[RMDB]
RNA sequence: GGGAACGACUCGAGUAGAGUCGAAAAUAACAUUUGGGUGGUGCUUCAAGCUAGUACCAGUUGAUCCAGAGGAAGUAGAGAAGGCUACAGAGGGAGAGGACAACUGCCUAUUACACCCUAUAUGCCACUUCAGAAAUGAUUUCGAUCAUUUCUGAAGAAAAGAAACAACAACAACAAC
Reactivity to 2A3 in 0.01 (KOAc 150mM, MgCl2 10mM, bicine 150mM(pH8.5), 24C), signal-to-noise 4, nucleotides 027 to 126: u070a020a030c030a060u050u050u080g000g000g000u000g000g060u060g000c020u120u220c110a160a050g040c020u040a010g020u020a070c020c010a010g010u010u050g050a250u000c000c020a030g010a010g120g070a100a020g010u020a000g020a020g040a270a060g170g030c000u030a010c030a020g110a040g070g090g020a200g020a040g040g010a000c010a020a010c030u020g010c020c010u060a060u060u090a050c020a030c010c010c020u030a040u010a000u060g070c020c020a050
Reactivity to DMS in 0.01 (KOAc 150mM, MgCl2 10mM, bicine 150mM(pH8.5), 24C), signal-to-noise 6, nucleotides 027 to 126: u010a110a260c060a070u000u000u000g000g010g040u000g010g020u010g010c010u010u000c140a080a130g020c060u000a030g000u000a060c250c010a030g010u000u000g000a110u010c040c020a130g010a170g000g010a120a120g010u000a030g000a160g020a090a110g010g000c030u000a040c070a080g010a130g010g010g000a110g000a110g020g000a040c030a030a040c040u000g030c130c040u000a050u000u000a090c040a030c010c000c010u000a050u000a040u010g010c050c070a210
The record gives the reactivity of an RNA of 177 nucleotides to 2A3 and DMS. For DMS, 6,250 sequencing reads were counted. For 2A3 the reverse transcriptase was SuperScript II with manganese. Conditions: 150 mM KOAc, 10 mM MgCl2 and 150 mM bicine (pH 8.5), 24 C.